[RMDB]
The record gives the reactivity of an RNA of 207 nucleotides to DMS and 2A3. Conditions: 150 mM KOAc, 10 mM MgCl2 and 150 mM bicine (pH 8.5), 24 C. The data come from the RNA Mapping Database (RMDB), library RNAMAK. For 2A3, 6,731 sequencing reads were counted. For DMS, 5,437 sequencing reads were counted.
RNA sequence: GGGAACGACUCGAGUAGAGUCGAAAAGGGGUCUCGCAUGAGUAAUUGUCAGGUUAUCAGGUCUGAAGCCUCCACGGACCUGUAAGACCUUGGAUUUAUGAAAUUGCGAGACGGAGGCACCCAAACCACAGCUAGAACUUCGGUUCUAGCUGUGGAACAAUAGAAGAUAGUUCGCUAUCUUCUAUUGAAAAGAAACAACAACAACAAC
Reactivity to DMS in 0.01 (KOAc 150mM, MgCl2 10mM, bicine 150mM(pH8.5), 24C), signal-to-noise 3, nucleotides 027 to 156: g020g010g040g030u000c010u000c000g030c010a060u000g020a280g010u000a050a040u000u010g010u000c090a060g020g020u000u000a270u000c020a010g020g040u020c000u020g000a070a180g010c010c000u000c000c030a300c010g010g010a020c010c010u030g000u000a050a160g000a020c000c010u010u000g030g010a150u000u000u000a050u000g000a120a150a260u000u000g020c010g000a030g020a010c020g000g020a040g060g030c010a070c030c000c000a080a110a160c000c000a020c000a000g000c000u020a000g000a020a010c000u000u010c300g060g030u000u000c000u000a000g010c010u000g030u000g010g000a010a060
Reactivity to 2A3 in 0.01 (KOAc 150mM, MgCl2 10mM, bicine 150mM(pH8.5), 24C), signal-to-noise 6, nucleotides 027 to 156: g100g010g020g000u000c000u010c000g010c000a010u020g010a010g040u030a070a040u180u230g170u300c190a040g000g020u020u030a070u160c000a000g010g000u000c000u010g030a100a030g020c000c010u010c010c000a020c020g000g000a000c000c010u000g010u040a090a120g020a010c000c000u030u090g170g060a110u140u280u280a040u080g020a000a020a030u020u000g000c000g000a000g000a000c000g000g010a000g000g000c000a020c000c010c020a040a040a030c000c000a000c000a000g000c000u000a000g010a010a000c010u040u120c300g050g000u000u000c000u000a000g000c010u000g000u000g000g000a000a000